Chemical mapping of a 177-nucleotide RNA with DMS. The data come from the RNA Mapping Database (RMDB), library OK2TRN. The DMS profile rests on 797 reads.

[RMDB]
RNA sequence: GGGAACGACUCGAGUAGAGUCGAAAAGCAAGUGAGGACACGAUGACGACAGCUACGGAACUCGCGGAGCGGUUGCGCGGUCGGGUUGCCCCGCCGGGUCAGCAGAUCGUGACGCGCGGGCAGAUGCGGAGCCGCAAAAAUUCGUUUUUGCGGCUCCAAAAGAAACAACAACAACAAC
Reactivity to DMS in 0.01 (KOAc 150mM, MgCl2 10mM, bicine 150mM(pH8.5), 24C), signal-to-noise 1, nucleotides 027 to 126: g040c060a090a080g000u010g000a080g000g010a110c080a060c150g010a090u010g020a120c060g000a080c040a060g010c010u000a090c070g010g010a070a170c140u000c040g030c080g030g010a280g010c030g000g010u000u010g010c040g030c070g010g010u020c030g070g030g030u010u010g020c130c000c000c020g050c090c050g030g000g000u010c040a120g040c140a100g010a020u000c010g020u000g000a140c050g040c080g000c090g000g000g000c000a040g000a050u010g000c180

DMS adducts were read by reverse transcription with MarathonRT.